[RMDB]
RNA sequence: GGGAACGACUCGAGUAGAGUCGAAAACUAGUCGAGCCUAUCGCGACGCCAUGGGGAGUGCUCGCGUGGAGCACCACGCCACAACUACAAGGCUCUGCAUCCGCGUCGAAGGCCGUUAGCGCCUCGGGUCUCUCUGCGGUUUCGACCGCAGAGAGACAAAAGAAACAACAACAACAAC
Reactivity to DMS in 0.01 (KOAc 150mM, MgCl2 10mM, bicine 150mM(pH8.5), 24C), signal-to-noise 1, nucleotides 027 to 126: c010u000a050g010u010c080g020a190g020c000c000u000a200u010c210g000c010g020a030c050g060c020c180a020u020g010g000g010g020a020g020u010g000c070u000c180g010c110g050u000g000g020a140g060c230a000c000c100a010c030g000c000c110a110c090a030a020c130u000a150c160a040a110g020g060c000u000c070u000g020c000a040u000c120c150g010c020g070u000c020g000a040a070g000g070c010c020g030u000u000a080g000c020g000c060c000u070c040g000g000

The record gives the reactivity of an RNA of 177 nucleotides to DMS. Reactivities are given for positions 27 through 126. The RNA was probed in 150 mM KOAc, 10 mM MgCl2 and 150 mM bicine (pH 8.5) at 24 C.